Background
Chemical mapping of a 177-nucleotide RNA with 2A3 and DMS. 2A3 adducts were read by reverse transcription with SuperScript II with manganese. The 2A3 profile rests on 4,241 reads. The RNA was probed in 150 mM KOAc, 10 mM MgCl2 and 150 mM bicine (pH 8.5) at 24 C.

RNA sequence: GGGAACGACUCGAGUAGAGUCGAAAACGACAAUUUUGCCACCAUCAUAUUGGAAAGUAAUCUGGCUUUUUGCAUCUGGGCGUAGCCACGGCAAAGUGCCAUUUUUACGGACAGCAGCCUGGCGCUCCUUUUACAUGACGUUCGCGUCAUGUAAAAGAAAAGAAACAACAACAACAAC
Reactivity to 2A3 in 0.01 (KOAc 150mM, MgCl2 10mM, bicine 150mM(pH8.5), 24C), signal-to-noise 3, nucleotides 027 to 126: c040g120a040c050a080a090u060u060u080u220g030c010c020a050c030c000a040u070c060a040u070a120u250u090g050g040a150a060a000g060u050a010a060u040c030u020g030g000c000u070u050u010u050u050g020c040a080u060c060u150g030g010g000c050g150u140a040g010c020c010a050c050g000g020c010a020a050a050g050u060g050c010c000a000u050u040u020u080u100a050c030g000g030a020c010a030g060c010a010g010c000c000u010g050g000c020g010c010u060c010
Reactivity to DMS in 0.01 (KOAc 150mM, MgCl2 10mM, bicine 150mM(pH8.5), 24C), signal-to-noise 4, nucleotides 027 to 126: c070g010a120c130a080a070u000u010u010u000g020c020c020a120c040c040a050u010c130a090u000a080u000u000g010g000a080a110a180g010u000a030a050u010c060u000g000g000c010u000u000u000u000u000g000c030a060u010c080u020g000g000g000c060g010u000a060g020c010c010a050c210g000g000c010a020a030a080g020u010g010c000c010a050u010u000u010u010u010a070c100g010g000a160c070a060g000c100a150g000c070c030u000g010g020c050g010c080u000c050